[RMDB]
An RNA of 207 nucleotides, treated with 2A3 and DMS and read out base by base. The RNA was probed in 150 mM KOAc, 10 mM MgCl2 and 150 mM bicine (pH 8.5) at 24 C. DMS (dimethyl sulfate) methylates the pairing face of unpaired adenines and cytosines. 2A3 adducts were read by reverse transcription with SuperScript II with manganese.
RNA sequence: GGGAACGACUCGAGUAGAGUCGAAAACAUAGUGAGGGAGGCAUCCCUGUUGUCCAUCUCAAGGACUCACUGCAGCUACACAUGUGGGUCACCCAGGCAGCUUCUUAAAAAAUACCAGUCCAGAGUCCUUUUGUAGUUCAUGAGUGUGAUGACUGGAGAUGGUCAUUAGUUUCGACUAAUGACCAUCAAAAGAAACAACAACAACAAC
Reactivity to 2A3 in 0.01 (KOAc 150mM, MgCl2 10mM, bicine 150mM(pH8.5), 24C), signal-to-noise 2, nucleotides 027 to 156: c050a020u110a010g100u080g090a050g030g000g010a000g030g050c050a040u010c010c020c010u010g000u010u020g000u000c030c010a090u050c120u030c050a040a060g080g000a010c000u010c020a020c040u030g020c020a030g010c020u070a010c050a010c010a070u070g000u000g060g040g000u030c010a030c040c010c020a000g010g050c010a010g000c040u070u050c000u100u090a120a060a060a000a010a030u140a050c070c000a000g000u000c000c040a020g000a000g100u020c020c030u010u100u050u120g050u050a070g010u050u090c020a100u120g050a060g080u090g030u040g060a110u050g000a050c010u020g010g000a020
Reactivity to DMS in 0.01 (KOAc 150mM, MgCl2 10mM, bicine 150mM(pH8.5), 24C), signal-to-noise 2, nucleotides 027 to 156: c090a170u000a060g010u010g010a100g020g000g000a090g050g060c090a160u000c020c010c030u000g020u020u000g000u000c000c060a140u000c100u010c060a090a120g060g000a050c000u000c000a110c050u010g060c020a040g000c030u000a070c000a100c040a110u000g030u000g020g000g010u000c070a100c030c000c040a080g060g020c050a070g020c010u000u000c030u050u010a010a000a080a080a120a130u010a060c020c020a040g010u000c020c030a150g000a120g000u000c010c000u010u000u000u000g010u000a040g040u000u000c070a100u000g000a110g040u000g020u000g020a090u010g020a110c000u010g000g010a300